[RMDB]
RNA sequence: GGGAACGACUCGAGUAGAGUCGAAAAGAAGGACGUGAUAAGCUGCGAUAAGUUACGGUAAGCUGCUAUAUGCUUUGACCCGUAAAUUUCCGAAUGGGGCAACCCGGCUAUGUGAAGCAUAGUCACCCACGAGAGUAUAGUUCGCUAUACUCUCGUGAAAAGAAACAACAACAACAAC
Reactivity to 2A3 in 0.01 (KOAc 150mM, MgCl2 10mM, bicine 150mM(pH8.5), 24C), signal-to-noise 4, nucleotides 027 to 126: g090a030a040g010g010a000c010g020u020g020a050u020a130a030g000c010u010g000c030g050a080u010a060a010g020u020u010a000c000g000g010u010a030a000g000c000u020g000c020u070a040u030a010u300g000c000u230u170u040g020a020c000c010c000g000u000a030a030a010u030u020u000c020c010g010a070a070u090g000g000g000g010c010a050a030c020c010c000g000g000c010u010a010u010g040u040g290a130a030g050c000a000u000a010g000u010c010a080c020c020
Reactivity to DMS in 0.01 (KOAc 150mM, MgCl2 10mM, bicine 150mM(pH8.5), 24C), signal-to-noise 6, nucleotides 027 to 126: g020a160a220g000g000a030c020g010u000g000a050u010a110a230g010c010u000g010c030g010a020u000a020a060g010u000u000a010c010g010g000u000a040a040g020c010u000g000c030u060a080u010a060u010g000c020u000u010u010g000a080c300c010c010g000u000a000a020a060u000u010u000c010c010g010a100a130u000g010g000g000g010c110a070a090c020c020c010g010g000c010u000a010u000g010u000g010a130a130g010c010a010u000a020g000u000c000a090c110c080